[RMDB]
The record gives the reactivity of an RNA of 177 nucleotides to DMS and 2A3.
The reactions ran in a buffer of 150 mM KOAc, 10 mM MgCl2 and 150 mM bicine (pH 8.5), at 24 C.
RNA sequence: GGGAACGACUCGAGUAGAGUCGAAAAGUUCAGUGGGAUUUCAGGAUACCCAGUGUAUGGAUUGAAUCAAGUUAAACUGAAAGACAAGGGCUGUGUCCAGGGCUCAGUGCUGAGAGGAAAGUGAAGAGGGAAAGGAUAGGUUCGCCUAUCCUUUCCCAAAAGAAACAACAACAACAAC
Reactivity to DMS in 0.01 (KOAc 150mM, MgCl2 10mM, bicine 150mM(pH8.5), 24C), signal-to-noise 2, nucleotides 027 to 126: g020u020u020c030a040g030u000g000g000g000a150u000u010u030c050a090g010g010a130u020a080c040c020c000a070g020u030g030u030a110u010g000g000a070u040u010g000a060a090u040c110a100a080g010u000u000a040a050a160c000u020g000a030a130a100g000a080c130a070a150g050g040g000c010u010g020u000g000u000c000c060a060g040g020g020c020u000c030a090g030u010g010c030u050g000a080g010a170g000g000a060a030a030g000u000g020a130a080g030a240
Reactivity to 2A3 in 0.01 (KOAc 150mM, MgCl2 10mM, bicine 150mM(pH8.5), 24C), signal-to-noise 1, nucleotides 027 to 126: g130u120u150c030a040g060u260g000g000g010a000u120u100u050c000a020g010g010a050u020a170c070c000c000a030g110u140g040u120a060u000g060g040a010u000u140g040a030a140u020c060a070a000g250u110u190a090a100a090c000u000g010a070a000a000g030a030c080a000a100g050g000g000c010u010g020u020g030u130c000c000a000g000g100g000c000u020c100a000g010u100g020c000u000g020a020g000a060g100g020a000a060a000g000u080g100a050a000g060a020

2A3 adducts were read by reverse transcription with SuperScript II with manganese.
The DMS profile rests on 2,892 reads.